[RMDB]
RNA sequence: GGGAACGACUCGAGUAGAGUCGAAAAUUCAAACACAGCCUGGGUGGCCACCUUUAGAAAGAUUUGCGGCAUGGUGGGAUUUAGCCAGCACUUCCUGUCUGGGCCAUGUCGGGUAACGGCUGCCUUCUUGGCACGUGGCAGGUCUUGUUUAUGGUCACCACUCGUUUUAUUUCGAUAAAACGAGUGGAAAAGAAACAACAACAACAAC
Reactivity to 2A3 in 0.01 (KOAc 150mM, MgCl2 10mM, bicine 150mM(pH8.5), 24C), signal-to-noise 1, nucleotides 027 to 156: u060u020c000a020a070a000c020a000c060a140g000c000c030u070g000g000g040u080g000g000c030c040a110c010c010u110u280u130a140g100a160a150a070g120a170u060u210u300g070c000g030g050c050a030u000g000g000u100g010g090g000a100u190u200u070a010g070c050c000a000g000c000a020c030u170u090c060c030u060g060u220c000u020g030g010g000c040c000a010u010g000u080c120g010g010g010u060a120a040c100g010g010c010u000g000c000c000u110u050c060u020u120g000g010c000a000c300g010u040g080g070c030a000g040g000u090c090u030u000g100u150u110u090a150u110g030g020u090c140a000